[RMDB]
RNA sequence: GGGAACGACUCGAGUAGAGUCGAAAAACAGUUGAAGGUACUGAGGCUCAGAGAGCUCAGGUCAUAUCAUCUCCCAGCGUCACAUGGCUGGGAAGUGGUGGAGCUGGGUUGGAGCUGCCAACAUCAGAGUCCAGACAUUUAACUCUUGAGUGUGCCACUUAAUGCGGGUAUUCGUACCCGCAUUAAGAAAAGAAACAACAACAACAAC
Reactivity to 2A3 in 0.01 (KOAc 150mM, MgCl2 10mM, bicine 150mM(pH8.5), 24C), signal-to-noise 2, nucleotides 027 to 156: a000c030a000g010u020u010g110a070a020g090g000u100a140c020u070g040a050g020g010c020u020c030a040g050a000g020a000g050c010u000c000a010g040g190u040c020a080u080a000u090c000a020u010c000u000c010c000c000a000g010c010g230u200c030a080c100a250u290g140g000c000u000g010g010g010a010a000g010u000g040g000u000g010g030a050g020c020u020g010g000g000u030u060g060g010a020g040c040u060g090c030c000a050a020c020a090u060c010a030g000a070g030u000c020c030a000g010a020c020a070u090u150u140a080a060c000u010c010u150u140g010a010g060u070g040u030g010c030c020a020
Reactivity to DMS in 0.01 (KOAc 150mM, MgCl2 10mM, bicine 150mM(pH8.5), 24C), signal-to-noise 2, nucleotides 027 to 156: a110c050a070g020u000u000g000a070a080g000g030u000a060c060u010g000a180g000g010c000u010c020a170g000a210g010a140g000c000u010c000a050g000g000u000c010a090u010a010u000c010a010u000c070u000c000c000c000a050g010c010g020u010c170a260c270a090u000g010g000c000u000g010g000g000a000a000g000u000g010g020u000g000g000a050g000c010u000g010g010g020u020u010g020g000a110g030c030u010g030c070c020a060a080c050a080u000c010a140g000a060g020u000c040c040a150g000a100c070a060u010u010u000a020a080c040u000c010u000u010g000a130g010u000g000u010g010c000c080a180